The data come from the RNA Mapping Database (RMDB), library OK2TRN. An RNA of 177 nucleotides, treated with 2A3 and DMS and read out base by base. For 2A3, 1,231 sequencing reads were counted. Values cover nucleotides 27 to 126. DMS adducts were read by reverse transcription with MarathonRT. The DMS profile rests on 712 reads.
RNA sequence: GGGAACGACUCGAGUAGAGUCGAAAAGACGACGAUGUCGACAGCCUCUUUCGUGAAAUCGUCGACGACGGUCAGGCACUUCACGCGCCGGCCGUUGGAAAGCGCAUCCAUCACGAAAUCGAUUGAAGGUUUUAGUCGAUUUCGAUCGACUAAAACCAAAAGAAACAACAACAACAAC
Reactivity to 2A3 in 0.01 (KOAc 150mM, MgCl2 10mM, bicine 150mM(pH8.5), 24C), signal-to-noise 1, nucleotides 027 to 126: g020a020c070g000a010c020g130a090u250g060u030c000g000a070c030a040g010c000c000u000c030u020u020u010c020g000u020g000a280a110a000u030c010g030u000c010g020a040c000g000a000c000g000g000u090c070a300g080g000c000a020c050u130u160c180a090c170g040c000g010c030c000g030g000c000c000g000u000u010g000g000a030a020a020g000c010g000c020a030u000c100c010a000u030c010a000c010g000a030a030a020u130c100g050a070u000u300g120a300a150
Reactivity to DMS in 0.01 (KOAc 150mM, MgCl2 10mM, bicine 150mM(pH8.5), 24C), signal-to-noise 1, nucleotides 027 to 126: g010a180c010g000a030c010g000a040u000g040u000c020g000a080c090a060g000c000c030u000c060u000u000u000c000g000u010g020a020a090a000u000c050g020u010c000g010a300c000g030a010c000g030g020u010c020a130g060g030c000a020c030u070u000c230a080c220g010c040g020c000c000g010g000c010c000g000u030u020g000g000a130a130a080g000c050g030c140a080u000c140c120a140u010c030a030c010g010a010a010a000u000c030g000a100u000u000g010a120a040